[RMDB]
RNA sequence: GGGAACGACUCGAGUAGAGUCGAAAAUCGUUACUUCGGUAACGAAAUCGAUUGCCUGAUCGUAAAACAGGAGACGGCCGUGGCCGCGACCACGUAAAAAAGCGUAACUUCGUGAAUUCGUUCACGAUAAAGAUGUUUGUUUCGACAAACAUCUUUAAAAAGAAACAACAACAACAAC
Reactivity to 2A3 in 0.01 (KOAc 150mM, MgCl2 10mM, bicine 150mM(pH8.5), 24C), signal-to-noise 1, nucleotides 027 to 126: u020c000g000u000u000a000c000u010u050c170g110g000u000a000a000c000g000a040a000a010u140c010g010a010u030u010g020c000c000u000g010a010u010c040g120u150a000a000a000a060c000a000g000g040a010g020a010c020g020g000c010c000g010u010g000g020c090c010g000c010g010a020c000c010a010c030g010u060a030a010a000a000a000a000g010c000g010u010a040a030c040u050u020c000g000u000g020a010a020u060u040c110g080u050u000c020a000c010g000a010
Reactivity to DMS in 0.01 (KOAc 150mM, MgCl2 10mM, bicine 150mM(pH8.5), 24C), signal-to-noise 3, nucleotides 027 to 126: u000c000g020u000u000a010c000u000u020c210g040g010u010a000a000c000g000a010a120a070u010c010g010a020u000u000g000c010c000u000g000a010u000c000g020u000a040a010a030a030c010a010g000g000a030g010a050c010g010g000c030c000g010u000g000g020c140c050g000c020g020a060c000c010a000c000g000u000a000a000a010a020a020a030g000c000g010u020a120a150c210u010u000c000g030u000g000a010a050u000u020c180g020u000u000c000a000c000g000a050